An RNA of 177 nucleotides, treated with 2A3 and DMS and read out base by base. For DMS, 8,952 sequencing reads were counted. The reactions ran in a buffer of 150 mM KOAc, 10 mM MgCl2 and 150 mM bicine (pH 8.5), at 24 C. It was measured as part of the RMDB library OK2TRN. Values cover nucleotides 27 to 126. The 2A3 profile rests on 8,442 reads. For DMS the reverse transcriptase was MarathonRT.
RNA sequence: GGGAACGACUCGAGUAGAGUCGAAAAGUUUUCUGUCUUGGACAAGGUGUUCGGCCUCAAGAAAGUAUUCUCUCGGACACACGAGUUCUUCCAAAAAUCGUGGGUUUACUAUUCAGAUAGAUCUGACCCAUUCUUUACAUUUCGAUGUAAAGAAUGGAAAAGAAACAACAACAACAAC
Reactivity to 2A3 in 0.01 (KOAc 150mM, MgCl2 10mM, bicine 150mM(pH8.5), 24C), signal-to-noise 6, nucleotides 027 to 126: g010u030u030u020u070c020u030g080u010c020u030u100g060g020a050c060a100a040g040g000u030g080u180u180c060g130g010c010c020u060c030a030a040g020a050a070a000g040u040a130u080u030c030u000c020u040c040g040g020a020c010a000c000a020c040g010a010g020u080u020c000u100u050c030c020a050a120a040a030a070u110c090g020u080g020g060g010u040u050u080a060c050u080a110u100u130c030a020g060a170u080a050g120a110u040c020u030g050a050c010
Reactivity to DMS in 0.01 (KOAc 150mM, MgCl2 10mM, bicine 150mM(pH8.5), 24C), signal-to-noise 7, nucleotides 027 to 126: g000u010u010u000u000c020u010g000u000c030u010u000g010g010a070c130a150a080g020g020u000g010u010u010c150g020g010c050c030u010c070a050a040g000a040a040a070g010u000a070u000u010c010u000c080u000c050g010g010a030c040a040c020a060c020g000a060g010u000u000c170u010u010c080c090a060a100a050a070a040u000c060g020u000g000g000g010u000u000u010a070c090u000a080u000u000c080a060g010a060u010a070g010a110u000c030u000g000a300c300